The record gives the reactivity of an RNA of 177 nucleotides to 2A3 and DMS.

RNA sequence: GGGAACGACUCGAGUAGAGUCGAAAAGCUGUGUAUCGCAGGGCUCGAUCAGUGGGAGUAGGCUCAGGUCGAUUGCUCUAUUGGUUUGGUCUGUGACCUGGUUGCUCGCUGAGAGUAAAACCAAUGGCUAAAUAUUUAAAUUCGUUUAAAUAUUUAGAAAAGAAACAACAACAACAAC
Reactivity to 2A3 in 0.01 (KOAc 150mM, MgCl2 10mM, bicine 150mM(pH8.5), 24C), signal-to-noise 6, nucleotides 027 to 126: g010c020u010g000u010g030u100a050u110c040g000c040a030g020g030g000c010u020c040g060a090u040c010a020g030u040g020g080g010a040g070u130a020g040g000c010u020c050a020g020g030u010c000g030a090u030u130g010c010u000c000u070a090u020u110g060g000u020u030u070g010g000u000c030u050g110u080g040a080c000c000u040g060g050u130u110g040c000u000c000g000c060u080g020a020g000a000g050u090a030a050a010a030c000c000a030a050u070g040g000
Reactivity to DMS in 0.01 (KOAc 150mM, MgCl2 10mM, bicine 150mM(pH8.5), 24C), signal-to-noise 5, nucleotides 027 to 126: g010c010u010g000u000g020u030a030u010c050g000c290a050g000g010g000c000u000c070g000a090u000c030a030g010u000g010g010g000a070g010u020a010g000g000c020u010c040a040g010g000u000c010g000a080u030u020g020c040u010c150u020a090u010u010g000g010u010u010u030g020g010u000c040u030g010u030g000a050c040c030u000g000g010u020u010g010c020u000c020g000c120u030g000a120g000a080g010u020a050a040a040a050c020c010a030a050u020g010g000
Values cover nucleotides 27 to 126. It was measured as part of the RMDB library OK1LIB. For DMS the reverse transcriptase was MarathonRT. For 2A3, 6,076 sequencing reads were counted. The RNA was probed in 150 mM KOAc, 10 mM MgCl2 and 150 mM bicine (pH 8.5) at 24 C. 2A3 adducts were read by reverse transcription with SuperScript II with manganese.